[RMDB]
RNA sequence: GGGAACGACUCGAGUAGAGUCGAAAAACGGAAAAAUCACGUUGCGUUCAAAACUUAUCACUCAACGACCGAAGGAAUAUCCGCUUGACCUUCAGUUUUCACAUGCGCGUAUUUUGAAUCAGGUGACCCUCCAAGAUACGUUCGCGUAUCUUGGAGGAAAAGAAACAACAACAACAAC
Reactivity to DMS in 0.01 (KOAc 150mM, MgCl2 10mM, bicine 150mM(pH8.5), 24C), signal-to-noise 2, nucleotides 027 to 126: a090c020g000g000a030a070a060a110a190u050c120a080c000g030u040u010g000c140g000u060u010c050a080a140a100a020c180u040u000a040u060c020a060c000u040c090a080a030c130g000a070c040c070g000a050a070g020g000a080a080u030a010u000c000c000g000c050u050u010g020a120c000c040u000u000c020a050g000u000u030u000u020c040a040c150a080u000g090c170g000c000g000u000a040u000u050u030u000g030a060a140u000c080a070g040g000u000g000a140c140
Reactivity to 2A3 in 0.01 (KOAc 150mM, MgCl2 10mM, bicine 150mM(pH8.5), 24C), signal-to-noise 4, nucleotides 027 to 126: a000c100g010g050a060a100a020a020a040u150c100a080c120g020u050u120g050c020g030u100u100c050a050a050a080a050c030u130u090a070u180c050a040c080u100c020a100a060c060g140a070c030c000g000a010a020g060g050a070a020u080a060u210c060c040g010c080u070u070g010a050c000c000u020u030c020a060g010u000u020u100u130c070a050c020a060u070g010c020g010c000g030u100a100u030u070u010u100g100a110a060u080c020a030g020g030u030g010a050c000
An RNA of 177 nucleotides, treated with DMS and 2A3 and read out base by base. The reactions ran in a buffer of 150 mM KOAc, 10 mM MgCl2 and 150 mM bicine (pH 8.5), at 24 C.